RNA sequence: GGGAACGACUCGAGUAGAGUCGAAAAUAGCAGGACAUAGCCGUUAUGCGCGAAGCGGUGUAGCGUCACUAUGAUGGCGGUACUAUGAAUUGAUGCAAGGUGUGGAGCGACCUUAAACAGUUCUGGUUUGACGGCUUUCAGUUCGCUGAAAGCCGAACCUAACGAAGCCGUUCGCGGCUUCGUUAGGAAAAGAAACAACAACAACAAC
Reactivity to 2A3 in 0.01 (KOAc 150mM, MgCl2 10mM, bicine 150mM(pH8.5), 24C), signal-to-noise 2, nucleotides 027 to 156: u140a010g060c020a000g000g030a030c020a050u050a000g010c010c010g010u080u100a070u140g050c090g000c030g090a070a010g060c060g010g000u060g020u040a040g100c000g030u040c030a000c110u200a090u290g180a240u030g060g000c010g010g010u050a040c050u020a040u110g090a090a040u090u050g050a040u070g050c020a040a010g000g010u000g010u060g030g010a020g000c000g000a010c000c000u090u170a040a040a040c000a010g000u010u010c000u010g000g110u040u090u110g110a050c030g000g000c000u000u020u000c000a020g030u000u130c160g030c100u010g000a000a010a010g000c010c000g000a000a000

This 207-nucleotide RNA was probed chemically with 2A3. Values cover nucleotides 27 to 156. Values are in units of 0.01, from 0 to 300, in steps of 10.